[RMDB]
RNA sequence: GGGAACGACUCGAGUAGAGUCGAAAAGGGGUCUCCAUGCGGAAGCGCUAACAGCUUGGAUUUAUACAGCUGAAGCCUCCACGGCUGUAUUGUCAGCUGGACCCGCUUCCCAUGGAGACGGAGGCACCCAAAAACUAGUACUUUCGAGUACUAGUAACCUUUAAUUGGGAUUCGUCCCAAUUAAAGGAAAAGAAACAACAACAACAAC
Reactivity to 2A3 in 0.01 (KOAc 150mM, MgCl2 10mM, bicine 150mM(pH8.5), 24C), signal-to-noise 4, nucleotides 027 to 156: g070g000g010g000u010c000u000c010c000a010u030g020c190g070g000a000a000g010c020g030c060u080a070a020c000a010g020c010u170u300g110g000a050u130u300u060a010u070a000c000a000g000c000u020g050a180a030g070c020c020u060c040c020a030c010g000g000c000u000g000u010a000u000u020g030u030c020a020g000c000u000g020g010a030c020c020c000g000c000u000u000c000c000c000a000u010g000g000a000g010a000c000g000g000a000g000g030c020a060c010c010c020a050a100a030a010a000c000u010a000g000u000a000c010u080u140u180c300g080a020g000u000a000c000u000a000g000u010a000a100
Reactivity to DMS in 0.01 (KOAc 150mM, MgCl2 10mM, bicine 150mM(pH8.5), 24C), signal-to-noise 1, nucleotides 027 to 156: g000g000g010g050u010c000u010c040c020a030u000g000c100g010g030a060a050g000c000g020c020u010a080a300c020a050g010c040u030u020g070g020a080u000u000u000a040u020a040c000a050g000c030u010g000a060a130g020c020c020u000c010c010a300c050g020g010c010u000g000u000a050u000u010g020u010c010a120g000c000u000g000g050a080c120c200c040g030c020u000u000c010c000c000a040u000g000g000a000g000a010c020g020g020a060g050g030c050a130c010c010c010a040a040a100a180a070c010u010a000g010u000a010c020u000u010u010c270g080a050g000u000a020c010u000a000g000u000a060a140